An RNA of 177 nucleotides, treated with 2A3 and DMS and read out base by base. Reactivities are given for positions 27 through 126. Source: RMDB library OK2TST, as collected in RNAgym. For DMS the reverse transcriptase was MarathonRT.

[RMDB]
RNA sequence: GGGAACGACUCGAGUAGAGUCGAAAAGUAUCAGGGUGCUCUUCCGUACGAAGCUUCCGUUGAGCUUCUCGUCAAGCACCUUCACGAUCUUACGUGGAGGCUCAGCGAGGGUUGAUAAACGCCUGAGAUUCGAAGAUUAGUUCGCUAAUCUUCGAAUAAAAGAAACAACAACAACAAC
Reactivity to 2A3 in 0.01 (KOAc 150mM, MgCl2 10mM, bicine 150mM(pH8.5), 24C), signal-to-noise 5, nucleotides 027 to 126: g060u050a050u120c020a000g000g020g050u050g030c010u000c010u080u030c010c030g050u050a060c070g050a070a010g020c020u160u050c070c050g080u010u080g000a010g010c000u020u010c010u020c010g040u080c090a050a000g030c050a080c030c000u030u040c030a020c030g050a090u050c030u070u160a040c020g020u050g020g000a000g010g000c000u000c050a020g000c010g010a090g000g020g000u000u030g040a070u090a130a140a020c060g110c020c010u040g020a040g040
Reactivity to DMS in 0.01 (KOAc 150mM, MgCl2 10mM, bicine 150mM(pH8.5), 24C), signal-to-noise 9, nucleotides 027 to 126: g010u000a100u000c020a050g010g010g030u000g020c110u000c050u000u000c030c030g010u010a100c160g010a120a080g000c020u000u000c060c100g010u010u010g000a030g010c000u000u000c010u000c020g010u000c140a040a040g010c200a070c030c020u010u010c120a070c120g000a110u000c090u000u000a050c020g020u010g000g000a020g010g010c020u000c040a090g010c010g010a080g010g000g010u000u000g010a120u010a070a110a070c070g010c020c000u000g000a090g000
The reactions ran in a buffer of 150 mM KOAc, 10 mM MgCl2 and 150 mM bicine (pH 8.5), at 24 C. For 2A3 the reverse transcriptase was SuperScript II with manganese. The DMS profile rests on 16,016 reads.